[RMDB]
RNA sequence: GGGAACGACUCGAGUAGAGUCGAAAACGUCAUCUCGGCUAGUUCGCGUGACCGGGAGAUCCGAGCAGAGGCAUAGCGAACUGCGCACGGAGAAGCCUUGAGGGAAUGCCGUAGGACCCGGGAAAAACGCGUCCGUCUGCUUCGGCAGGCGGACGUGAAAAGAAACAACAACAACAAC
Reactivity to 2A3 in 0.01 (KOAc 150mM, MgCl2 10mM, bicine 150mM(pH8.5), 24C), signal-to-noise 2, nucleotides 027 to 126: c050g100u070c010a120u080c020u020c020g020g010c020u040a010g020u050u010c030g000c000g040u030g050a130c000c040g000g000g010a050g020a020u160c010c010g040a060g020c060a020g050a020g050g030c040a020u070a030g010c020g000a010a010c000u000g010c050g000c020a060c010g050g040a050g040a060a020g080c020c000u030u050g040a070g000g030g010a010a150u090g090c020c000g000u030a010g000g000a010c000c000c000g000g020g000a060a020a000a000a000
Reactivity to DMS in 0.01 (KOAc 150mM, MgCl2 10mM, bicine 150mM(pH8.5), 24C), signal-to-noise 3, nucleotides 027 to 126: c060g010u010c070a140u000c010u030c030g000g030c040u030a070g000u010u020c020g020c040g000u010g020a150c010c000g000g000g000a110g010a110u000c010c010g000a100g000c100a090g000a210g000g000c000a110u010a120g010c050g000a010a060c010u000g000c050g050c060a090c030g010g010a050g000a130a100g000c020c000u000u060g010a100g000g000g000a070a080u020g000c070c000g010u020a140g000g000a120c030c000c000g020g000g030a040a090a020a080a150